[RMDB]
RNA sequence: GGGAACGACUCGAGUAGAGUCGAAAAGAUCGUCUCUUCGGAGACGAUCAAAUAAAUCACAGGAAACGGCCAAAAGAGAAAAUCACACCUGUGAAAAGGCCGAAACCCUCUGCUUCGGCAGAGGGAAGACACUAUAAGGGUUCGCCCUUAUAGUGUCAAAAGAAACAACAACAACAAC
Reactivity to 2A3 in 0.01 (KOAc 150mM, MgCl2 10mM, bicine 150mM(pH8.5), 24C), signal-to-noise 2, nucleotides 027 to 126: g000a000u010c000g020u010c010u000c000u010u070c190g050g000a010g010a000c020g000a000u000c000a010a000a000u000a000a000a000u050c000a010c000a000g010g100a150a240a130c060g030g000c000c030a000a100a150a000g130a030g040a090a200a090a000u070c020a060c000a000c060c010u020g000u010g040a090a050a000a000g010g000c000c000g020a050a020a030c010c010c010u000c000u010g000c010u020u070c160g140g020c010a000g000a010g000g000g000a000a000
Reactivity to DMS in 0.01 (KOAc 150mM, MgCl2 10mM, bicine 150mM(pH8.5), 24C), signal-to-noise 2, nucleotides 027 to 126: g000a010u010c000g000u000c010u010c000u000u010c210g040g020a020g010a000c000g000a000u000c000a020a050a060u020a080a110a120u010c010a010c030a010g030g000a060a120a150c100g010g010c030c010a060a110a080a160g000a060g000a070a060a120a100u000c070a100c140a150c040c020u000g010u000g000a060a080a100a080g000g000c000c020g010a110a100a070c000c000c000u000c000u000g000c000u000u010c140g020g030c000a000g020a010g000g000g010a010a010